[RMDB]
Chemical mapping of a 177-nucleotide RNA with DMS and 2A3.
RNA sequence: GGGAACGACUCGAGUAGAGUCGAAAAAAAUUUUGCUCGAAGUACUGUGACAGUACCUAGUCCUUACCGUUACAAGUACAUUAAUAUUCAUUUCCCAUAAAAACCAAGUAUAUAGAGUGUCUCCUCACUUAACACUUCUUUUCGAAGAAGUGUUAAGAAAAGAAACAACAACAACAAC
Reactivity to DMS in 0.01 (KOAc 150mM, MgCl2 10mM, bicine 150mM(pH8.5), 24C), signal-to-noise 5, nucleotides 027 to 126: a090a030a030u010u000u000u000g010c040u010c060g010a100a100g010u000a020c000u000g010u010g000a030c010a010g000u000a010c120c040u000a100g000u010c150c130u000u000a020c010c050g020u010u000a010c020a020a050g010u000a010c010a110u020u030a080a080u010a070u000u010c050a110u010u000u000c000c000c020a170u030a050a040a050a070a060c140c100a050a090g010u020a040u010a080u020a090g020a060g000u000g000u000c050u000c040c020u000c100a200
Reactivity to 2A3 in 0.01 (KOAc 150mM, MgCl2 10mM, bicine 150mM(pH8.5), 24C), signal-to-noise 9, nucleotides 027 to 126: a000a010a010u150u130u060u080g050c040u050c050g040a100a010g000u010a010c010u010g010u010g020a010c010a000g000u010a010c010c020u040a030g080u070c020c010u010u020a010c000c000g020u010u010a010c040a200a050g010u010a000c010a030u080u160a170a070u120a120u150u130c080a060u030u020u030c010c000c000a030u200a040a130a020a010a010c070c050a080a030g120u020a060u020a020u060a170g060a020g050u030g060u000c010u010c040c000u030c010a060
Description
For 2A3 the reverse transcriptase was SuperScript II with manganese. Conditions: 150 mM KOAc, 10 mM MgCl2 and 150 mM bicine (pH 8.5), 24 C. 2A3 is a SHAPE reagent: it acylates the 2'-hydroxyl of flexible nucleotides of all four kinds. The data come from the RNA Mapping Database (RMDB), libraries RFM100 and RFMREP.